RNA sequence: GGGAACGACUCGAGUAGAGUCGAAAAGAUAUGGACUCUCACAUGGAGAUACCAGUCGGAAACGACUGGGUAUCUAUGAAGUGUAGAGUCCUAAGUCAAAUCGCUACGCAGUUCGCUGCGUAGCGAACGUUAAAACAAUCUUCGGAUUGUUUUAACGAAAAGAAACAACAACAACAAC
Reactivity to 2A3 in 0.01 (KOAc 150mM, MgCl2 10mM, bicine 150mM(pH8.5), 24C), signal-to-noise 6, nucleotides 027 to 126: g010a000u020a010u050g000g000a000c000u000c000u040c010a030c020a110u240g200g040a140g010a070u010a010c000c000a000g010u010c000g000g010a030a010a000c010g010a000c000u040g040g050g050u020a000u000c010u070a300u150g080a020a020g020u020g050u250a000g000a000g000u010c000c000u000a000a000g000u010c010a050a020a240u050c000g000c000u000a000c000g000c010a010g000u070u120c210g110c190u000g000c000g020u000a000g010c000g000a000a010
Reactivity to DMS in 0.01 (KOAc 150mM, MgCl2 10mM, bicine 150mM(pH8.5), 24C), signal-to-noise 4, nucleotides 027 to 126: g010a010u000a070u010g000g000a020c000u000c000u000c110a010c020a110u010g020g010a030g010a010u000a050c000c000a010g000u000c000g010g000a020a020a050c000g010a010c000u000g010g020g000u000a000u000c000u000a240u000g000a060a190g020u000g010u010a010g010a020g000u000c000c000u000a000a070g000u000c000a090a140a150u000c000g000c010u000a010c000g010c000a010g010u000u020c300g020c010u000g010c000g020u000a000g020c000g000a000a030